[RMDB]
RNA sequence: GGGAACGACUCGAGUAGAGUCGAAAAAUAGGUUUCUGUCAUUAUUGGUGAGACCAUUAGGAGUAUAUAGUAGUGCAGUAAGUGUAUGGUUGUCGAUAUUCAAGAUGUAUAAGAAAUCAUUCAUCAAGAAAAGAGUUGUCUCCAUAGGAGUAGGGCACCAGACGAAUACAUUCGUGUAUUCGUCUGGAAAAGAAACAACAACAACAAC
Reactivity to 2A3 in 0.01 (KOAc 150mM, MgCl2 10mM, bicine 150mM(pH8.5), 24C), signal-to-noise 3, nucleotides 027 to 156: a000u120a040g000g030u010u030u030c020u010g110u050c010a090u020u210a020u090u150g000g000u060g010a040g000a060c010c010a030u060u120a040g040g000a040g040u030a020u020a020u050a150g100u040a000g020u030g060c040a010g040u160a110a010g000u070g000u040a010u080g050g050u050u030g060u060c050g050a030u020a070u170u080c040a050a040g000a050u030g020u020a030u070a120a090g100a070a100a040u070c010a030u080u010c010a020u030c010a020a010g060a060a090a010a000g040a010g010u000u050g000u050c010u000c030c030a050u060a070g030g040a030g050u060a050g010g020g020c050a010
Reactivity to DMS in 0.01 (KOAc 150mM, MgCl2 10mM, bicine 150mM(pH8.5), 24C), signal-to-noise 1, nucleotides 027 to 156: a090u010a110g000g010u000u000u010c000u010g040u030c060a040u000u000a180u010u000g000g040u010g020a120g000a090c030c020a080u000u000a070g000g010a100g040u000a090u000a080u000a100g020u000a120g020u000g060c000a120g010u000a070a110g010u020g020u000a070u000g030g030u000u000g000u000c010g000a090u000a130u000u000c010a040a260g060a050u000g040u010a120u000a050a120g000a080a050a090u000c030a170u030u000c060a060u010c000a050a250g010a060a030a040a040g000a120g000u010u000g000u000c030u000c010c070a060u010a120g030g020a130g070u020a090g010g010g030c090a160
Structure probing data (2A3 and DMS) for a 207-nucleotide construct. For 2A3, 1,325 sequencing reads were counted. For DMS, 1,681 sequencing reads were counted. For 2A3 the reverse transcriptase was SuperScript II with manganese.